[RMDB]
RNA sequence: GGGAACGACUCGAGUAGAGUCGAAAAGGAAGUCAGGACCAAGGAGGCCAGCAACCCUGGCUUUUGCUGGGGUGCAGGGAUGUCUCGAGGCUUGCAGAUCACAUCUCACUCUCCAGGAUCUGCUGCCACGAUAGAAAGCAUUCGUGCUUUCUAUCGUAAAAGAAACAACAACAACAAC
Reactivity to 2A3 in 0.01 (KOAc 150mM, MgCl2 10mM, bicine 150mM(pH8.5), 24C), signal-to-noise 2, nucleotides 027 to 126: g040g020a080a020g040u110c050a020g040g050a050c020c010a030a050g060g020a010g010g050c030c030a010g000c020a080a300c000c000c010u020g040g030c050u060u220u140u300g000c010u010g000g000g000g020u010g010c020a010g070g000g000a050u040g030u030c020u030c070g040a040g010g010c070u080u130g000c000a010g000a030u030c030a020c010a180u040c050u040c050a050c040u120c000u020c010c030a020g070g000a010u000c000u010g000c000u010g000c020c010
Reactivity to DMS in 0.01 (KOAc 150mM, MgCl2 10mM, bicine 150mM(pH8.5), 24C), signal-to-noise 7, nucleotides 027 to 126: g000g010a060a070g010u010c050a080g010g000a160c060c050a090a100g000g000a060g000g000c040c030a080g010c050a090a100c030c010c000u000g010g000c000u000u010u000u010g020c020u000g010g000g010g030u000g010c030a070g010g010g010a060u000g010u000c220u010c040g000a120g010g010c020u010u000g000c010a020g000a020u000c030a080c080a060u000c030u000c120a110c130u000c030u010c020c050a210g000g000a030u000c010u000g000c010u000g000c020c040